This 207-nucleotide RNA was probed chemically with 2A3 and DMS. The reactions ran in a buffer of 150 mM KOAc, 10 mM MgCl2 and 150 mM bicine (pH 8.5), at 24 C. The DMS profile rests on 4,091 reads. 2A3 adducts were read by reverse transcription with SuperScript II with manganese. For DMS the reverse transcriptase was MarathonRT.

RNA sequence: GGGAACGACUCGAGUAGAGUCGAAAAACCUUUGUGCACAACGCGAUAUGCAAGCCUCACAUUGACCCAUUGGGUCAAUGUUGAGGUGAUGACCAUAUCGGAAGUUGUGCACUCUGGUAAACACUACGGUUUGAUGUUCGCAUCAAACCGUAGUGAACUCUUAAAUCGUGUUCGCACGAUUUAAGAGAAAAGAAACAACAACAACAAC
Reactivity to 2A3 in 0.01 (KOAc 150mM, MgCl2 10mM, bicine 150mM(pH8.5), 24C), signal-to-noise 4, nucleotides 027 to 156: a000c000c000u000u020u000g010u000g000c000a000c000a010a010c020g090c010g300a000u000a000u000g000c030a050a110g010c000c000u010c000a000c000a000u000u000g000a000c020c010c140a250u160u300g010g000g000u000c000a000a000u000g010u030u140g000a010g000g000u000g000a000u020g000a010c040c040a010u000a000u010c010g030g050a230a070g000u000u000g000u000g000c000a000c000u000c000u000g000g000u040a050a080a020c010a000c000u000a000c010g000g000u000u000u000g010a000u000g040u080u100c300g010c130a000u010c000a000a000a000c000c000g000u000a000g000u000g000a000a000
Reactivity to DMS in 0.01 (KOAc 150mM, MgCl2 10mM, bicine 150mM(pH8.5), 24C), signal-to-noise 1, nucleotides 027 to 156: a040c000c010u000u000u010g020u010g020c000a000c010a000a020c000g010c030g030a030u000a000u000g000c000a120a300g040c010c000u000c000a020c020a020u010u000g000a000c020c000c000a300u010u020g070g020g030u000c000a020a000u000g010u000u000g020a050g000g040u000g010a010u000g010a170c300c000a020u010a000u020c010g000g000a100a150g010u000u010g030u010g000c020a000c000u000c020u000g010g010u000a080a020a100c020a000c010u000a000c000g020g000u000u000u020g010a020u010g000u000u010c300g000c000a020u000c010a010a010a000c000c000g020u000a000g010u000g010a020a080